[RMDB]
RNA sequence: GGGAACGACUCGAGUAGAGUCGAAAAACUGGUCUACAGCUGUCUUUAUGGUAGCAGUUGUAGCAUUCCUCUGUGGGAAAGAAACUGUUACACAAUUUAAUGCCUCUUUCUUAGCCACACAGGAGGAUUGUAGUCAGCGAUUCGUCGCUGACUACAAAAAAGAAACAACAACAACAAC
Reactivity to 2A3 in 0.01 (KOAc 150mM, MgCl2 10mM, bicine 150mM(pH8.5), 24C), signal-to-noise 2, nucleotides 027 to 126: a010c100u140g050g050u020c000u000a000c000a000g000c000u000g190u300c100u110u220u180a180u210g150g030u180a080g000c000a000g000u030u000g020u010a000g020c000a030u000u030c000c000u010c010u000g010u000g000g000g030a000a030a000g040a040a020a010c050u120g060u070u150a060c080a010c020a110a140u090u190u300a160a120u220g000c000c010u000c000u000u000u000c000u020u050a060g070c000c000a160c000a000c000a020g170g010a010g000g000a020
Reactivity to DMS in 0.01 (KOAc 150mM, MgCl2 10mM, bicine 150mM(pH8.5), 24C), signal-to-noise 2, nucleotides 027 to 126: a110c070u000g030g000u060c000u000a010c020a000g090c000u000g000u010c050u000u020u000a180u070g040g000u000a010g000c010a000g000u000u000g000u000a000g000c080a240u030u000c000c000u000c090u000g010u000g010g000g000a050a000a000g010a000a030a030c110u020g000u010u050a170c120a130c280a050a040u030u030u040a100a180u060g000c270c000u000c220u000u000u010c010u010u000a060g000c020c010a050c020a040c150a040g030g020a030g000g000a060